[RMDB]
RNA sequence: GGGAACGACUCGAGUAGAGUCGAAAAGUGAGGAGGCAUCCUCUUUAGUCCGCAAGACACUUGGUUGAAAAGAAAGCAUAUAUAAGCUGGAAAGUACAUGGUAGUUAGUCUACUCGCUAUCCUAGUUCUCUGACGUAUGUUUCGACAUACGUCAGAGAAAAGAAACAACAACAACAAC
Reactivity to 2A3 in 0.01 (KOAc 150mM, MgCl2 10mM, bicine 150mM(pH8.5), 24C), signal-to-noise 2, nucleotides 027 to 126: g150u060g000a030g000g000a010g060g020c000a090u030c000c010u050c000u000u000u000a120g020u010c000c030g010c150a000a010g070a010c040a010c100u060u080g100g000u060u220g120a010a080a000a000g080a000a130a000g050c110a000u030a000u020a030u060a140a000g000c040u000g020g170a010a100a070g050u070a020c020a000u090g020g000u030a070g030u000u070a020g010u020c010u000a000c000u010c000g000c000u010a130u030c000c010u090a080g080u050u000